[RMDB]
This 207-nucleotide RNA was probed chemically with 2A3.
RNA sequence: GGGAACGACUCGAGUAGAGUCGAAAAAUAAAGACUCGGUGCAAGUGCUAAUGUUGCCCCGACAAAGAGCCAUUCACCACCAUUGACCGUUCCGUUACUACUGAUAUAUUCGCUUCCAGCAGUACCGAUGAAUGCAAUUGUGAGACCAAUGACACCAUGUUCUAACGCUAUUCGUAGCGUUAGAACAAAAAGAAACAACAACAACAAC
Reactivity to 2A3 in 0.01 (KOAc 150mM, MgCl2 10mM, bicine 150mM(pH8.5), 24C), signal-to-noise 2, nucleotides 027 to 156: a000u130a020a050a000g060a010c050u020c090g060g000u020g000c020a040a020g030u070g110c070u100a190a010u090g000u050u030g000c000c000c000c010g000a020c050a000a080a010g040a000g000c000c000a060u050u030c010a010c050c000a020c020c040a020u040u080g050a120c090c080g020u000u050c010c010g020u030u050a040c000u020a020c010u030g070a020u060a010u030a040u220u150c080g030c090u040u050c060c000a000g000c000a000g020u020a010c040c020g040a050u110g000a050a030u050g000c030a010a070u020u040g040u030g010a070g020a050c060c040a030a070u130g000a040c010a010c050c040a060
2A3 adducts were read by reverse transcription with SuperScript II with manganese. It was measured as part of the RMDB library OK3TST.